[RMDB]
RNA sequence: GGGAACGACUCGAGUAGAGUCGAAAAGAGGGUGAUAGCCCCGUAGGCGUAAGUUCCACGGUUACAAGGCGGGGUAUCCUGAGUACCGUGGGUUGGAAUUCUCGCGGGAAGCUGGGGGUCAUCAACCAUGUAGGUGCGAUUUCGAUCGCACCUACAUAAAAGAAACAACAACAACAAC
Reactivity to 2A3 in 0.01 (KOAc 150mM, MgCl2 10mM, bicine 150mM(pH8.5), 24C), signal-to-noise 2, nucleotides 027 to 126: g110a030g020g060g030u010g000a010u090a140g010c000c000c000c010g050u080a100g060g000c050g140u050a060a000g030u190u030c000c010a030c050g010g010u010u090a000c010a020a090g130g000c050g080g160g000g000u080a070u080c010c000u130g040a070g010u000a000c000c000g000u010g030g000g060u060u160g040g120a150a170u150u080c060u100c070g010c070g020g000g010a040a030g000c040u090g000g000g000g020g000u000c000a000u050c000a000a090c020c000
Reactivity to DMS in 0.01 (KOAc 150mM, MgCl2 10mM, bicine 150mM(pH8.5), 24C), signal-to-noise 1, nucleotides 027 to 126: g000a220g040g000g040u000g000a070u000a250g000c000c020c000c020g010u000a080g050g000c060g040u000a020a050g040u000u010c030c050a040c020g040g000u020u040a030c060a200a200g000g060c040g030g020g000g020u050a040u010c000c020u000g000a250g040u000a000c000c000g000u000g010g000g000u030u010g000g000a110a090u060u010c040u040c000g030c000g030g110g000a030a050g000c070u000g030g030g000g000g000u030c000a030u000c060a070a120c030c020
About this RNA:
The record gives the reactivity of an RNA of 177 nucleotides to 2A3 and DMS. The reactions ran in a buffer of 150 mM KOAc, 10 mM MgCl2 and 150 mM bicine (pH 8.5), at 24 C. Source: RMDB library RFM100, as collected in RNAgym. Values are in units of 0.01, from 0 to 300, in steps of 10. For DMS, 1,585 sequencing reads were counted.